[RMDB]
RNA sequence: GGGAACGACUCGAGUAGAGUCGAAAACGUGCUCGCUACGGCGAGCACGAAAUAAAACAGGCAAGUUCCAGCCUGAAAAAGGAACAAAGAUCGAAAGAUCAAAGUCGCCUGCUACGGCAGGCGACAACGAUGAAAAUCAGUUCGCUGAUUUUCAUCGAAAAGAAACAACAACAACAAC
Reactivity to 2A3 in 0.01 (KOAc 150mM, MgCl2 10mM, bicine 150mM(pH8.5), 24C), signal-to-noise 1, nucleotides 027 to 126: c000g000u010g000c000u020c000g000c000u030a060c300g230g000c000g060a010g000c040a000c000g020a000a000a000u080a000a000a010a030c100a000g000g030c020a110a210g020u000u040c030c000a000g010c000c020u040g030a070a000a000a000a030g020g000a020a010c030a150a140a000g000a000u010c010g030a210a030a030g000a000u010c050a020a130a070g000u000c000g000c000c000u000g000c000u000a060c300g100g000c000a000g000g000c000g000a000c010a000a000
Structure probing data (2A3) for a 177-nucleotide construct. Conditions: 150 mM KOAc, 10 mM MgCl2 and 150 mM bicine (pH 8.5), 24 C. The 2A3 profile rests on 1,271 reads.